[RMDB]
An RNA of 177 nucleotides, treated with 2A3 and DMS and read out base by base. For DMS, 1,532 sequencing reads were counted. The reactions ran in a buffer of 150 mM KOAc, 10 mM MgCl2 and 150 mM bicine (pH 8.5), at 24 C. The data come from the RNA Mapping Database (RMDB), library OK1LIB. For DMS the reverse transcriptase was MarathonRT.
RNA sequence: GGGAACGACUCGAGUAGAGUCGAAAAUGCGGACAACGUGCAACGGUUCGUACAGUCGCUGCCCGCAAACGACCCCAACACAGCGUGGUUGCGCGGUCAGGUUGCGGAUCUGCAGGCGCACGUCGCCACUCCCGAAGGACUUCGGUCCUUCGGGAGUAAAAGAAACAACAACAACAAC
Reactivity to 2A3 in 0.01 (KOAc 150mM, MgCl2 10mM, bicine 150mM(pH8.5), 24C), signal-to-noise 3, nucleotides 027 to 126: u140g010c010g000g000a040c060a210a080c210g090u150g010c050a110a090c110g110g000u080u080c050g030u140a070c080a110g020u030c010g040c050u000g030c000c070c000g000c000a010a050a000c050g040a000c000c000c000c000a000a000c050a010c050a140g300c090g220u300g090g010u060u060g010c090g020c120g110g010u030c010a000g080g010u030u010g020c010g000g000a030u010c050u110g020c020a040g050g000c000g010c030a020c080g060u080c020g040c000c010
Reactivity to DMS in 0.01 (KOAc 150mM, MgCl2 10mM, bicine 150mM(pH8.5), 24C), signal-to-noise 2, nucleotides 027 to 126: u000g060c040g040g010a010c000a050a210c050g050u010g090c040a280a180c060g000g050u000u030c040g010u040a150c070a150g000u010c030g010c000u000g000c070c060c000g000c000a000a000a130c070g000a070c000c020c020c050a010a050c030a000c070a220g010c200g000u120g000g000u000u000g050c120g070c160g110g060u080c000a000g000g020u000u020g000c020g000g000a010u040c140u010g000c040a040g000g000c090g010c000a120c020g000u000c040g070c020c040